[RMDB]
RNA sequence: GGGAACGACUCGAGUAGAGUCGAAAAGUGGUGCGCGGAGAGGGUAACCACCGGCGCGCGUCACUGAUAUAUCCACCGGGGGGUAAGGGGAGAAGAGGAUACAGCGCGACGAAGUUAGCACGCUGCCGAAAUGUACCCACAUUCGUGUGGGUACAAACUGUGUAUUAGAUUUCGAUCUAAUACACAGAAAAGAAACAACAACAACAAC
Reactivity to DMS in 0.01 (KOAc 150mM, MgCl2 10mM, bicine 150mM(pH8.5), 24C), signal-to-noise 3, nucleotides 027 to 156: g010u010g000g010u000g030c020g020c020g050g000a190g000a160g030g020g020u010a120a140c110c090a080c000c000g020g010c030g020c010g040c010g000u000c020a040c010u000g010a120u000a090u000a120u010c030c030a170c050c030g020g000g020g030g040g020u000a050a070g020g010g020g000a110g020a060a060g000a160g000g000a170u000a060c040a070g040c020g040c020g000a150c020g010a120a080g030u010u000a100g010c050a040c000g010c010u010g000c020c050g000a070a100a110u000g000u000a030c000c000c000a010c010a100u000u000c280g000u000g040u000g000g000g000u000a010c000a000a060a130
Reactivity to 2A3 in 0.01 (KOAc 150mM, MgCl2 10mM, bicine 150mM(pH8.5), 24C), signal-to-noise 3, nucleotides 027 to 156: g000u000g010g000u020g030c020g000c010g060g130a130g040a120g140g000g040u100a110a120c060c040a030c030c030g090g040c000g000c000g010c000g000u000c000a020c000u000g000a000u040a030u010a050u140c040c040a050c100c060g000g020g000g030g000g010u000a060a030g000g000g050g010a030g020a040a030g040a030g000g020a000u070a100c040a010g000c000g020c020g080a080c040g030a120a010g060u070u080a010g040c030a000c060g010c010u040g040c030c010g030a090a100a020u080g000u000a000c000c030c000a000c000a010u030u080c140g020u020g000u010g020g000g000u000a000c000a000a000a000
Chemical mapping of a 207-nucleotide RNA with DMS and 2A3. The RNA was probed in 150 mM KOAc, 10 mM MgCl2 and 150 mM bicine (pH 8.5) at 24 C. Reactivities are given for positions 27 through 156. The DMS profile rests on 5,778 reads. For DMS the reverse transcriptase was MarathonRT. It was measured as part of the RMDB library M2RFPK.